[RMDB]
RNA sequence: GGGAACGACUCGAGUAGAGUCGAAAAAGCGUGUCGAGGAAGCGGCAAUGAUCUCGUAAACCAUAUGUCGCAAAAAAUAAUCGCCAAUACCAAGAGCGAUUCCCAGUCCUUCGCCCUCGCUGCCUAAUAAGCAGUGAGUGAGGGACCCUUAAUGGGUCACUGUCACUUACUUCGGUAAGUGACAGUGAAAAGAAACAACAACAACAAC
Reactivity to DMS in 0.01 (KOAc 150mM, MgCl2 10mM, bicine 150mM(pH8.5), 24C), signal-to-noise 1, nucleotides 027 to 156: a040g000c030g040u000g030u010c040g010a120g000g000a170a300g010c020g050g050c000a060a050u000g000a040u000c020u110c300g050u000a090a030a010c000c030a050u000a040u010g030u000c020g040c010a010a010a060a110a090a050u000a050a070u010c030g010c010c050a050a080u020a170c080c010a150a170g030a110g010c010g000a120u000u010c000c020c010a130g010u010c010c000u000u000c020g030c000c020c050u020c030g000c020u000g000c000c010u000a170a120u000a060a090g000c020a010g010u030g010a000g080u020g010a050g010g010g010a010c000c010c000u010u010a160a120u000g010g000g020u000
Reactivity to 2A3 in 0.01 (KOAc 150mM, MgCl2 10mM, bicine 150mM(pH8.5), 24C), signal-to-noise 7, nucleotides 027 to 156: a010g070c050g010u100g030u060c020g020a030g040g030a120a020g010c000g010g000c000a020a030u050g040a100u040c080u060c150g200u280a080a060a080c040c010a040u120a110u120g020u010c010g000c000a020a060a010a030a010a050u230a020a030u060c040g000c040c010a070a060u110a190c030c020a080a010g020a010g020c000g020a020u030u020c000c010c000a000g010u020c000c000u010u010c010g050c030c050c000u010c000g000c000u000g000c000c000u110a140a060u270a180a000g000c000a000g000u000g020a000g010u020g000a000g000g000g000a000c000c000c000u100u130a120a110u170g020g020g000u010